RNA sequence: GGGAACGACUCGAGUAGAGUCGAAAAGAACACGAUGUCCGCGUCCGGGAAGCGCGCGAGCAUCCGCUCGACCGCCUCCAGAUUGAUCGAUGCGUCCUCGCGGAUCGCCGUGUGCGGGCAGCCGCCAAUUUAAUGAUGCUUUCGAGCAUCAUUAAAUAAAAGAAACAACAACAACAAC
Reactivity to DMS in 0.01 (KOAc 150mM, MgCl2 10mM, bicine 150mM(pH8.5), 24C), signal-to-noise 6, nucleotides 027 to 126: g000a120a110c130a160c060g000a110u000g000u000c020c020g020c020g010u000c090c060g000g010g000a040a050g000c050g020c300g020c050g010a010g010c040a110u000c250c220g010c000u010c030g010a060c070c020g010c030c020u000c060c040a120g010a100u010u010g010a050u010c050g010a050u010g020c030g000u000c080c080u000c130g010c100g010g000a040u010c030g010c020c010g010u000g000u000g030c020g010g000g000c070a050g000c070c040g010c030c090a080
Reactivity to 2A3 in 0.01 (KOAc 150mM, MgCl2 10mM, bicine 150mM(pH8.5), 24C), signal-to-noise 4, nucleotides 027 to 126: g030a040a020c040a000c070g040a030u020g010u020c010c010g000c020g040u000c010c020g070g000g000a050a050g070c100g020c000g020c020g130a010g000c020a060u080c080c120g000c010u030c010g160a200c010c020g050c020c010u050c030c010a080g070a220u140u220g030a040u090c050g030a050u140g030c010g000u030c010c030u040c020g030c010g030g040a060u050c050g060c070c000g060u060g010u030g030c020g010g020g000c010a010g040c050c040g040c030c010a020

The data come from the RNA Mapping Database (RMDB), library OK2TST. This 177-nucleotide RNA was probed chemically with DMS and 2A3. For 2A3 the reverse transcriptase was SuperScript II with manganese. The 2A3 profile rests on 4,648 reads.